[RMDB]
RNA sequence: GGGAACGACUCGAGUAGAGUCGAAAACUGCCUUGGUUACUGCGCCCGAAGGAACCUACCUAGCAGCUGUCAGGCGUGCAGCCCUCACCGGCCGUACUGUGCUCUAUUCACCGAGCAAUGUUGGCAGGAACCUAAGAGUGUUCGCACUCUUAGGUUCAAAAGAAACAACAACAACAAC
Reactivity to 2A3 in 0.01 (KOAc 150mM, MgCl2 10mM, bicine 150mM(pH8.5), 24C), signal-to-noise 3, nucleotides 027 to 126: c020u050g010c020c010u070u100g040g000u060u070a060c010u060g010c020g040c080c030c020g050a040a020g040g030a070a050c020c040u050a060c040c010u050a100g040c010a020g020c040u050g040u050c030a040g090g050c020g050u060g010c010a010g000c000c030c000u030c040a050c020c020g020g040c010c000g000u020a050c030u080g050u070g120c010u000c000u040a170u130u190c080a090c100c080g010a010g020c000a030a050u110g000u060u010g020g000c000a010g110
Reactivity to DMS in 0.01 (KOAc 150mM, MgCl2 10mM, bicine 150mM(pH8.5), 24C), signal-to-noise 4, nucleotides 027 to 126: c060u000g000c020c050u010u000g000g020u000u000a050c070u000g030c050g010c040c020c050g010a130a090g010g010a090a060c070c040u000a100c040c040u000a080g010c040a060g020c040u010g020u010c060a080g010g000c080g020u000g000c050a090g000c030c020c020u000c130a120c110c100g000g000c010c020g010u010a030c070u010g020u010g000c020u000c000u010a130u000u020c200a100c180c150g000a030g010c020a070a100u000g000u000u000g020g010c020a090g020

Conditions: 150 mM KOAc, 10 mM MgCl2 and 150 mM bicine (pH 8.5), 24 C. Chemical mapping of a 177-nucleotide RNA with 2A3 and DMS. 2A3 adducts were read by reverse transcription with SuperScript II with manganese. Reactivities are given for positions 27 through 126. The DMS profile rests on 4,005 reads. The data come from the RNA Mapping Database (RMDB), library OK2TRN.